[RMDB]
RNA sequence: GGGAACGACUCGAGUAGAGUCGAAAAGAAUGACAACAAGAAGACUGUGCUCCUGGGACUGUCAUACGACAAAGAGGGGAAGUGGCAGGUGCUGUGCGGUGGCAAAACGACCAAGGAGCUCCGCAUAAUUAGGUAUUAAUUUCGAUUAAUACCUAAUAAAAGAAACAACAACAACAAC
Reactivity to DMS in 0.01 (KOAc 150mM, MgCl2 10mM, bicine 150mM(pH8.5), 24C), signal-to-noise 9, nucleotides 027 to 126: g010a120a070u010g010a070c050a050a080c070a090a100g000a120a080g010a090c070u000g010u000g010c030u000c020c020u000g010g000g010a120c110u000g010u000c020a060u010a100c150g010a070c090a040a070a100g010a130g010g010g000g010a090a080g020u000g010g000c050a050g010g010u000g020c090u000g020u000g000c060g000g020u010g000g020c050a040a030a080a090c120g000a100c060c060a050a080g000g000a130g010c020u000c020c030g010c080a060u010a070
Reactivity to 2A3 in 0.01 (KOAc 150mM, MgCl2 10mM, bicine 150mM(pH8.5), 24C), signal-to-noise 5, nucleotides 027 to 126: g050a030a090u140g030a020c030a070a010c020a030a100g090a070a020g050a130c050u060g030u050g040c010u000c020c010u020g020g030g030a040c020u010g010u000c010a070u100a190c080g030a020c070a030a090a020g090a090g010g020g000g030a050a070g030u060g030g000c010a010g020g060u070g040c040u040g030u040g010c030g010g020u060g030g000c010a020a070a030a090c050g050a040c020c010a020a020g030g000a020g000c010u000c000c010g030c010a030u090a120